[RMDB]
RNA sequence: GGGAACGACUCGAGUAGAGUCGAAAACAAACAACAUGCCAAGCAGUAGGGAAGAAGAGAAAGUGGCGGUACCUGCAGAAGAAGCGCCGGCUAACAACGUAACAGCAGACGCAGCAAGGCAUGAAAAGAUGCGGGCAUAUUUCGAUAUGCCCGCAUCAAAAGAAACAACAACAACAAC
Reactivity to 2A3 in 0.01 (KOAc 150mM, MgCl2 10mM, bicine 150mM(pH8.5), 24C), signal-to-noise 1, nucleotides 027 to 126: c000a010a030a060c060a050a000c000a000u010g000c000c000a090a000g050c000a000g040u080a040g000g060g060a100a010g020a070a050g120a040g070a150a010a000g040u020g000g060c040g000g020u060a030c000c010u020g030c020a040g070a300a000g020a060a030g030c000g030c010c040g000g000c030u000a080a020c070a030a050c050g110u110a120a040c060a040g000c040a000g070a010c020g000c000a010g060c000a000a070g000g000c000a010u000g000a000a050a000a000
Reactivity to DMS in 0.01 (KOAc 150mM, MgCl2 10mM, bicine 150mM(pH8.5), 24C), signal-to-noise 1, nucleotides 027 to 126: c130a280a020a200c220a000a030c050a000u000g000c000c000a180a190g080c240a300g020u000a090g000g000g000a170a210g000a100a000g000a120g000a000a130a200g000u000g000g000c000g000g080u000a000c040c080u000g000c270a060g000a070a000g060a220a150g140c000g000c050c000g000g000c000u000a110a000c290a000a090c190g000u000a220a190c140a090g000c120a000g100a070c010g000c000a090g000c060a170a300g000g050c000a000u190g000a000a000a030a000
An RNA of 177 nucleotides, treated with 2A3 and DMS and read out base by base. It was measured as part of the RMDB library OK1LIB. The RNA was probed in 150 mM KOAc, 10 mM MgCl2 and 150 mM bicine (pH 8.5) at 24 C. For 2A3 the reverse transcriptase was SuperScript II with manganese.